[RMDB]
RNA sequence: GGGAACGACUCGAGUAGAGUCGAAAAGAUAUGGAACGUACAGGGAGACGGUGGUCGGAAACGACCAUCAUCGUCAUCGAUCUGUGACGUUCCUAAGUCAAAAGAUUUGAGGUUCGCCUCAAAUCAAGAGACAGAAUAGGUUCGCCUAUUCUGUCUCAAAAGAAACAACAACAACAAC
Reactivity to DMS in 0.01 (KOAc 150mM, MgCl2 10mM, bicine 150mM(pH8.5), 24C), signal-to-noise 4, nucleotides 027 to 126: g010a020u000a020u010g000g000a020a000c000g020u000a000c000a010g000g010g000a010g030a010c010g030g020u000g000g020u010c000g020g010a000a020a020c000g000a020c000c000a000u000c270a020u010c300g000u000c010a300u010c190g000a040u010c000u000g000u000g010a050c000g020u000u010c000c000u000a000a070g000u000c000a120a070a110a130g000a020u000u000u000g010a000g010g010u000u020c300g020c000c000u010c000a010a010a000u010c000a100a130
Reactivity to 2A3 in 0.01 (KOAc 150mM, MgCl2 10mM, bicine 150mM(pH8.5), 24C), signal-to-noise 3, nucleotides 027 to 126: g000a000u020a010u050g000g000a000a000c000g020u020a000c000a000g020g010g020a040g000a010c020g000g010u010g000g010u000c000g010g060a010a000a000c010g010a010c060c020a000u010c010a030u100c060g030u000c010a100u300c020g000a000u020c000u000g010u080g070a010c000g000u010u000c000c000u010a000a000g010u010c000a000a020a020a220g010a010u010u000u020g010a020g050g060u120u210c300g180c050c000u000c000a000a000a000u000c000a010a050